[RMDB]
RNA sequence: GGGAACGACUCGAGUAGAGUCGAAAAAGGCCCCCGGCGUUCGACUGCUGACGCCAGGGAAAACGUCGGCCCCUAAGAUCGGGCGCGACUUAGUGGCGUCGCCGCGAGUAUUCUUGUACGGGGAAGCGCACUUCGCUGUCUCAUCCCGUGUGGCCACGAAUAUAGGCCACUUCGGUGGCCUAUAUUCAAAAGAAACAACAACAACAAC
Reactivity to 2A3 in 0.01 (KOAc 150mM, MgCl2 10mM, bicine 150mM(pH8.5), 24C), signal-to-noise 2, nucleotides 027 to 156: a000g070g000c020c010c000c010c030g040g000c050g070u100u050c060g140a280c100u060g000c150u220g020a010c000g000c000c000a000g050g020g060a050a100a040a060c100g000u010c020g000g010c000c000c000c050u100a140a080g060a180u250c050g000g010g070c150g000c000g100a020c000u050u020a120g020u040g000g020c000g000u010c020g010c020c050g080c010g000a000g070u190a210u060u130c050u120u100g040u050a040c030g000g000g000g000a010a000g040c000g030c030a050c080u210u150c150g030c080u020g040u230c020u030c020a100u090c010c000c000g020u030g010u050g050g020c030c000a030c060
Structure probing data (2A3) for a 207-nucleotide construct. The RNA was probed in 150 mM KOAc, 10 mM MgCl2 and 150 mM bicine (pH 8.5) at 24 C. The 2A3 profile rests on 677 reads.